Description:
Structure probing data (2A3 and DMS) for a 177-nucleotide construct. 2A3 adducts were read by reverse transcription with SuperScript II with manganese. Source: RMDB libraries RFM100 and RFMREP, as collected in RNAgym.
RNA sequence: GGGAACGACUCGAGUAGAGUCGAAAAGAUGGAGUGAGUGAUGGAAUAGGUUGCCAACUGUAGUUACUCCACUCAGCACAGAAUGGCUGCGGGGAAAUAUAAUCAGACAUGCCCAAAGAAGUCUGCUAUAGUCGAUAAGAUUCGUCUUAUCGACUAUAAAAGAAACAACAACAACAAC
Reactivity to 2A3 in 0.01 (KOAc 150mM, MgCl2 10mM, bicine 150mM(pH8.5), 24C), signal-to-noise 9, nucleotides 027 to 126: g100a040u140g030g010a030g010u050g010a040g030u060g030a070u060g010g100a110a070u070a130g080g040u100u110g090c040c020a030a020c040u060g030u120a070g030u050u050a030c020u010c020c000a030c020u030c010a010g020c030a030c020a060g190a120a080u140g050g000c020u010g010c030g000g020g010g020a000a060a000u220a020u050a040a080u080c010a000g030a060c020a040u090g030c000c000c000a020a060a010g070a050a010g070u020c010u010g000c000u010
Reactivity to DMS in 0.01 (KOAc 150mM, MgCl2 10mM, bicine 150mM(pH8.5), 24C), signal-to-noise 9, nucleotides 027 to 126: g010a090u010g000g010a040g020u000g010a060g020u010g010a060u010g000g020a090a080u020a080g000g010u010u010g010c070c060a050a110c060u010g010u010a070g010u010u000a080c060u000c030c050a060c030u000c010a070g000c060a060c080a100g020a100a100u020g010g000c030u010g000c110g010g000g000g000a050a060a090u010a080u030a090a080u020c040a020g000a040c050a090u010g000c010c010c020a060a110a120g010a080a110g010u000c010u000g010c300u000